[RMDB]
Chemical mapping of a 177-nucleotide RNA with 2A3 and DMS. For DMS, 3,199 sequencing reads were counted. The RNA was probed in 150 mM KOAc, 10 mM MgCl2 and 150 mM bicine (pH 8.5) at 24 C. Values cover nucleotides 27 to 126. It was measured as part of the RMDB library OK2TRN. The 2A3 profile rests on 1,471 reads. DMS adducts were read by reverse transcription with MarathonRT.

RNA sequence: GGGAACGACUCGAGUAGAGUCGAAAAUCAAGAUAUGCAGGUAUUCGAGUGCCUAGAAAUAAAGCAAUUGUUGGCCAAAAUGCAUUUAGUCAUGAAUCAGGUAUUCACCAAGAUGGCGUAUUAAAACCAACAGGUACUACUUCGGUAGUACCUGUUGAAAAGAAACAACAACAACAAC
Reactivity to 2A3 in 0.01 (KOAc 150mM, MgCl2 10mM, bicine 150mM(pH8.5), 24C), signal-to-noise 1, nucleotides 027 to 126: u060c010a000a090g010a060u100a010u110g000c030a020g060g060u090a090u050u180c060g010a060g010u000g000c000c020u040a080g070a040a110a040u150a040a030a000g040c050a050a050u140u100g120u090u130g130g020c030c040a000a000a090a070u030g010c030a050u060u120u170a060g020u050c010a050u070g090a100a120u040c000a000g000g030u080a060u000u080c030a000c060c000a010a010g080a050u110g060g000c050g000u050a030u020u200a130a120a060a050c030
Reactivity to DMS in 0.01 (KOAc 150mM, MgCl2 10mM, bicine 150mM(pH8.5), 24C), signal-to-noise 4, nucleotides 027 to 126: u010c070a140a150g010a060u000a020u000g010c010a050g020g010u000a100u000u010c110g010a050g010u010g000c000c010u010a080g010a060a090a060u000a070a110a100g010c070a060a070u000u000g020u010u000g000g010c060c070a020a050a080a090u010g010c050a100u010u000u000a040g020u000c060a050u010g000a090a070u000c060a020g000g010u010a030u010u000c040a100c070c070a040a060g010a060u000g010g010c030g030u000a050u010u020a030a060a080a120c240